[RMDB]
RNA sequence: GGGAACGACUCGAGUAGAGUCGAAAAAAGUGUCCGCUGGGACCCGCUUAGAGGACAUGCCCACUAGCUACUGAAGCGCGCACGGUAGCUUCUCUGCAACAGCCUCUAAUGGUCCUGUGCUGAAGCGCGCACGGCAACCGAAAGGUGCGGCAAACAAUCUAAUAUAAGCGUUCGCGCUUAUAUUAGAAAAAGAAACAACAACAACAAC
Reactivity to DMS in 0.01 (KOAc 150mM, MgCl2 10mM, bicine 150mM(pH8.5), 24C), signal-to-noise 1, nucleotides 027 to 156: a000a140g020u000g030u010c000c020g000c000u000g010g020g000a030c010c010c080g010c100u010u000a020g000a020g000g030a060c100a200u000g000c000c030c060a080c040u000a070g020c000u000a000c010u000g010a080a070g010c010g020c000g040c050a300c020g020g030u000a030g000c000u000u000c030u010c040u000g020c010a030a030c040a040g000c000c000u000c030u000a080a050u010g000g000u000c010c010u000g000u010g040c040u000g000a060a040g040c000g050c000g000c040a230c040g000g030c020a080a110c020c010g010a070a090a180g020g020u010g020c070g030g000c020a110a100a090c080a090a190
Reactivity to 2A3 in 0.01 (KOAc 150mM, MgCl2 10mM, bicine 150mM(pH8.5), 24C), signal-to-noise 3, nucleotides 027 to 156: a020a010g080u030g030u030c010c000g000c010u000g000g000g010a000c000c010c010g030c030u010u000a000g000a010g000g020a060c050a160u140g030c030c050c010a130c200u170a020g000c000u010a000c000u010g030a220a050g000c010g000c000g000c000a010c010g020g010u000a000g000c000u160u080c140u010c030u140g020c040a110a050c040a210g070c000c010u010c000u030a010a000u130g000g000u000c000c000u000g000u000g010c010u010g020a150a070g000c000g000c000g000c010a010c010g010g000c010a020a020c000c010g020a060a010a020g000g010u000g010c000g020g000c000a040a100a030c050a060a070